Overview
The data come from the RNA Mapping Database (RMDB), library OK1LIB. Structure probing data (DMS and 2A3) for a 177-nucleotide construct. For 2A3 the reverse transcriptase was SuperScript II with manganese. The reactions ran in a buffer of 150 mM KOAc, 10 mM MgCl2 and 150 mM bicine (pH 8.5), at 24 C.
[RMDB]
RNA sequence: GGGAACGACUCGAGUAGAGUCGAAAACAUCUUCUCGUGAAAGCGAUGGCUUUAAAGACAUUCGAGACGUCUUAGGACAAGUGUAUGAAACAGCUGAAGAGCUUGAUCAAAAUAGUGGUCAAACACCGAAUUGGACUUUAUUCGUAAAGUCCAAUUCAAAAGAAACAACAACAACAAC
Reactivity to DMS in 0.01 (KOAc 150mM, MgCl2 10mM, bicine 150mM(pH8.5), 24C), signal-to-noise 6, nucleotides 027 to 126: c110a090u020c050u030u010c020u000c000g010u010g010a080a050a100g010c140g010a130u010g010g010c050u000u010u020a080a090a080g000a060c050a100u020u030c120g000a110g020a090c220g010u000c030u000u010a090g000g000a040c060a050a060g010u010g000u030a090u020g030a100a070a070c210a070g000c020u010g010a060a040g000a060g020c030u000u000g000a060u000c020a040a070a090a090u040a100g030u000g000g020u000c040a030a040a060c080a050c130c110
Reactivity to 2A3 in 0.01 (KOAc 150mM, MgCl2 10mM, bicine 150mM(pH8.5), 24C), signal-to-noise 9, nucleotides 027 to 126: c030a070u040c010u110u010c010u020c010g100u080g080a100a030a000g040c040g070a100u140g060g000c030u060u080u130a090a130a010g060a030c030a050u090u140c130g030a030g020a090c060g030u000c010u060u070a090g070g020a010c030a070a070g020u020g020u070a070u100g080a110a090a030c030a040g010c030u050g040a080a020g030a040g100c000u030u040g010a020u040c020a000a060a060a090u200a090g130u050g020g010u020c010a020a060a020c060a030c050c040